RNA sequence: GGGAACGACUCGAGUAGAGUCGAAAAGAAAGGCAGCUAGUGCAGCCCACGCAGCGGCAUGCUUUUGCAUGCCCAGUCGAGCCCACGACUAAGGGCAGCUGCGUCACUGAGGGCAGCUGCCGAAAGACCUAUGCCUCAUGUUCGCAUGAGGCAUAGGAAAAGAAACAACAACAACAAC
Reactivity to 2A3 in 0.01 (KOAc 150mM, MgCl2 10mM, bicine 150mM(pH8.5), 24C), signal-to-noise 4, nucleotides 027 to 126: g080a030a090a000g010g010c010a010g010c020u110a040g130u140g180c050a020g000c050c020c010a030c010g020c000a000g000c020g010g050c020a010u010g000c000u220u300u250u300g000c010a010u010g010c020c010c000a000g000u030c020g000a030g000c000c010c000a020c020g100a020c060u100a070a130g040g020g020c000a010g000c000u000g000c000g020u060c030a120c130u140g070a170g000g030g010c010a000g000c000u000g000c010c000g000a010a010a000g040a020
Reactivity to DMS in 0.01 (KOAc 150mM, MgCl2 10mM, bicine 150mM(pH8.5), 24C), signal-to-noise 3, nucleotides 027 to 126: g000a090a120a180g000g040c010a010g020c000u000a110g010u010g030c090a070g010c020c050c170a070c050g010c020a030g020c030g040g000c040a020u000g000c030u000u000u000u000g000c010a020u000g000c010c000c070a020g010u000c050g010a190g000c000c000c000a300c050g010a060c110u010a080a120g010g000g010c080a110g010c000u000g010c000g000u010c230a100c110u030g000a040g000g010g010c000a050g000c000u000g000c000c000g000a020a060a110g000a190
Chemical mapping of a 177-nucleotide RNA with 2A3 and DMS. 2A3 adducts were read by reverse transcription with SuperScript II with manganese. The reactions ran in a buffer of 150 mM KOAc, 10 mM MgCl2 and 150 mM bicine (pH 8.5), at 24 C. The 2A3 profile rests on 4,912 reads. The DMS profile rests on 3,163 reads.